[RMDB]
RNA sequence: GGGAACGACUCGAGUAGAGUCGAAAACCCUUAGCAUUCGUGCUAAGGGAAAUAACGGUCGGCUCAUGCAGCUAGUCGAAAAUGCUGCUCGACCUUUUGGUUAAAUCUGGCCGUUCGCGGCCAGAAAGUUAGGAAUUACUUUCGAGUAAUUCCUAACAAAAGAAACAACAACAACAAC
Reactivity to DMS in 0.01 (KOAc 150mM, MgCl2 10mM, bicine 150mM(pH8.5), 24C), signal-to-noise 5, nucleotides 027 to 126: c010c000c000u010u000a000g010c000a020u000u000c190g030u000g010c000u000a000a010g000g000g010a010a030a030u010a050a080c210g000g000u000c000g010g000c160u000c190a070u010g000c000a010g020c010u000a180g010u020c210g010a080a090a090a090u020g000c000u000g000c000u000c000g000a030c000c000u000u000u000u020g010g010u010u010a070a110a150u000c000u000g000g020c000c000g020u000u010c200g020c010g010g000c000c000a000g000a000a020a060
Reactivity to 2A3 in 0.01 (KOAc 150mM, MgCl2 10mM, bicine 150mM(pH8.5), 24C), signal-to-noise 4, nucleotides 027 to 126: c000c000c000u000u000a000g010c010a020u020u080c180g100u050g000c000u010a000a000g000g000g030a050a100a010u120a050a010c070g000g000u010c010g030g000c060u070c290a050u210g000c000a000g000c000u050a030g220u240c090g070a080a040a000a040u160g000c000u000g010c040u020c010g000a010c000c000u030u080u040u060g040g000u080u170a050a040a070u020c010u010g000g010c020c000g000u040u030c210g010c010g070g000c000c000a000g000a010a010a010
Structure probing data (DMS and 2A3) for a 177-nucleotide construct.